[RMDB]
RNA sequence: GGGAACGACUCGAGUAGAGUCGAAAAUUUUUAUUCGCUGUGGCGUUGAAUUGUAAUUGAAGUGAACCUUUAACAUCGCGGUCGGUUAAUCCAGAGAUGGUCGUAUAACAGAGGGAGAUGUUACCCAUAAUGGUGAUCCAUUCGUGGAUCACCAUUAAAAAGAAACAACAACAACAAC
Reactivity to DMS in 0.01 (KOAc 150mM, MgCl2 10mM, bicine 150mM(pH8.5), 24C), signal-to-noise 1, nucleotides 027 to 126: u010u010u000u030u000a060u020u000c060g030c020u000g030u000g030g000c040g040u000u000g020a030a080u010u010g010u000a070a130u000u000g000a090a080g020u000g000a070a170c080c020u000u000u000a060a060c060a040u000c040g010c110g000g000u000c040g020g020u000u000a030a120u020c050c050a060g020a130g000a080u000g000g000u020c110g010u000a070u000a060a050c060a040g000a120g040g000g010a180g010a060u000g000u000u000a090c010c030c000a120